Chemical mapping of a 177-nucleotide RNA with 2A3 and DMS. DMS adducts were read by reverse transcription with MarathonRT. Source: RMDB library OK2TRN, as collected in RNAgym. The RNA was probed in 150 mM KOAc, 10 mM MgCl2 and 150 mM bicine (pH 8.5) at 24 C. Values cover nucleotides 27 to 126. For 2A3, 697 sequencing reads were counted.

RNA sequence: GGGAACGACUCGAGUAGAGUCGAAAAGAUCGUUGAUGGCGCUCUGUAUGAAGAAGCGUGGAAUUCAAGAACAGAUGAUCUAUCUCGACACCAAGCGCGUGGAACUUAUCUUCCAGAUGCCCCUCGCGCAUCUCUCUAGCUUCGGCUAGAGAGAUGCAAAAGAAACAACAACAACAAC
Reactivity to 2A3 in 0.01 (KOAc 150mM, MgCl2 10mM, bicine 150mM(pH8.5), 24C), signal-to-noise 1, nucleotides 027 to 126: g030a100u020c010g000u060u020g100a190u070g070g000c000g000c020u000c070u000g130u140a250u250g180a270a100g080a090a010g030c010g050u040g060g060a140a120u250u100c070a120a020g020a180a040c010a050g030a020u050g010a010u070c000u010a060u010c030u010c010g010a000c040a010c070c010a180a000g060c050g010c030g020u050g010g000a060a000c030u120u110a190u150c040u000u100c010c030a070g010a180u100g040c000c000c020c000u000c020g040c040
Reactivity to DMS in 0.01 (KOAc 150mM, MgCl2 10mM, bicine 150mM(pH8.5), 24C), signal-to-noise 1, nucleotides 027 to 126: g020a070u010c020g030u000u000g000a070u000g000g020c070g010c060u010c000u000g000u000a060u010g030a140a070g000a040a050g020c010g010u040g030g000a090a150u000u000c120a070a180g010a050a100c110a060g020a030u000g000a070u000c060u000a070u000c030u000c010g030a070c160a130c170c050a040a080g000c000g010c030g040u000g030g000a030a020c070u000u000a110u000c110u000u010c080c030a070g020a090u010g000c050c010c000c000u000c040g000c140